[RMDB]
RNA sequence: GGGAACGACUCGAGUAGAGUCGAAAAUGGGCUGUGGGGAGGCUGAGAAUUGAGAUGCAUGUAUGAGAUGAGUCACGAGGGCCAAGUAGUGUGUGUGAGAAAGCAGGCACAGCACCACUAAACACUACGCUUUGUAUUAUUUCGAUAAUACAAAGCGAAAAGAAACAACAACAACAAC
Reactivity to 2A3 in 0.01 (KOAc 150mM, MgCl2 10mM, bicine 150mM(pH8.5), 24C), signal-to-noise 5, nucleotides 027 to 126: u050g010g020g040c050u040g040u080g050g010g000g010a030g030g000c030u040g030a030g050a130a090u140u140g040a090g010a060u090g030c050a020u090g040u160a060u120g060a100g010a060u080g020a020g060u050c010a000c080g030a070g010g020g000c010c010a060a030g020u030a040g000u020g010u020g000u000g010u020g030a110g050a070a060a020g060c030a010g060g000c030a030c020a040g000c010a020c000c000a020c010u060a060a080a000c060a010c040u130a030
Reactivity to DMS in 0.01 (KOAc 150mM, MgCl2 10mM, bicine 150mM(pH8.5), 24C), signal-to-noise 8, nucleotides 027 to 126: u000g010g000g010c040u000g030u010g010g010g010g000a070g020g020c060u010g010a090g000a090a100u010u010g000a110g020a080u010g010c060a060u000g020u010a090u000g010a090g010a080u010g020a090g010u000c040a070c090g000a100g010g010g010c030c070a060a080g020u010a030g010u000g010u000g010u010g010u000g010a140g010a080a070a090g020c060a060g010g000c060a060c100a090g000c030a080c030c010a030c070u000a070a070a060c120a060c090u000a070